[RMDB]
RNA sequence: GGGAACGACUCGAGUAGAGUCGAAAAGUAGCAUGACGGAAGCUAUGAAUUAAUCCUGGUGGAGGGGUGUGUUCAGUUUGAGGGAGGAUGAUAAAAUGGAACGGAGAUUGCAAGGAGACGUAGAAAACCUUGUCUACAUCUUCGGAUGUAGACAAGGAAAAGAAACAACAACAACAAC
Reactivity to DMS in 0.01 (KOAc 150mM, MgCl2 10mM, bicine 150mM(pH8.5), 24C), signal-to-noise 3, nucleotides 027 to 126: g020u010a020g050c040a060u030g010a100c120g000g010a100a150g020c040u000a050u010g010a110a100u030u020a120a170u020c000c010u000g010g060u030g010g010a140g010g010g000g000u030g060u010g000u000u000c070a090g000u010u010u000g030a070g030g020g010a080g030g000a060u020g030a030u010a030a070a050a040u000g010g010a070a100c080g000g000a050g020a020u010u000g000c060a020a070g000g000a060g000a040c120g000u010a090g020a070a030a040a150
Reactivity to 2A3 in 0.01 (KOAc 150mM, MgCl2 10mM, bicine 150mM(pH8.5), 24C), signal-to-noise 3, nucleotides 027 to 126: g020u030a000g020c030a000u160g060a070c050g050g020a050a020g010c020u030a040u030g000a010a070u080u150a030a040u020c000c000u030g050g000u070g030g040a030g000g060g010g000u090g000u000g000u020u110c040a030g000u030u110u120g030a070g020g020g010a000g010g000a010u070g000a000u140a000a010a020a110u100g020g020a030a010c040g010g010a030g000a020u080u050g020c000a030a010g000g010a080g010a030c050g050u050a020g090a030a070a000a010